[RMDB]
RNA sequence: GGGAACGACUCGAGUAGAGUCGAAAAUUAUAAACACCGGAAUACAGACCAUUAGCGCCCGAUUUCGAAUAGGUAAAUCCCUACUUUCCAUGACAUAAAUAAAGGACAAAACGCCGAGCCAUCAGUAACUUACUCUCAAUUUCGAUUGAGAGUAAGUAAAAGAAACAACAACAACAAC
Reactivity to DMS in 0.01 (KOAc 150mM, MgCl2 10mM, bicine 150mM(pH8.5), 24C), signal-to-noise 5, nucleotides 027 to 126: u040u040a080u010a100a080a090c070a080c050c020g000g020a070a050u020a080c110a120g010a060c080c040a060u010u020a060g010c070g000c030c020c040g000a080u000u010u010c040g000a080a080u010a050g000g010u010a040a090a080u000c020c010c010u000a080c060u010u000u000c010c040a050u030g020a070c080a040u020a040a040a070u030a040a050a100g000g020a070c070a040a060a080a100c070g000c030c030g000a070g020c020c010a010u010c070a050g010u010a070
Reactivity to 2A3 in 0.01 (KOAc 150mM, MgCl2 10mM, bicine 150mM(pH8.5), 24C), signal-to-noise 3, nucleotides 027 to 126: u070u030a080u120a150a110a020c030a030c030c020g000g050a050a010u120a070c070a030g130a040c040c000a040u060u120a070g020c010g030c040c010c010g070a040u020u070u070c020g030a080a060u030a090g000g030u050a060a070a090u040c030c010c000u040a090c030u030u070u000c020c030a030u060g030a060c010a040u220a090a150a010u170a060a120a010g020g000a020c020a020a110a010a010c020g010c020c000g020a010g020c000c010a050u040c000a050g030u010a030
The record gives the reactivity of an RNA of 177 nucleotides to DMS and 2A3.
As a SHAPE reagent, 2A3 marks flexible, mostly unpaired nucleotides at the ribose 2'-OH.
The RNA was probed in 150 mM KOAc, 10 mM MgCl2 and 150 mM bicine (pH 8.5) at 24 C.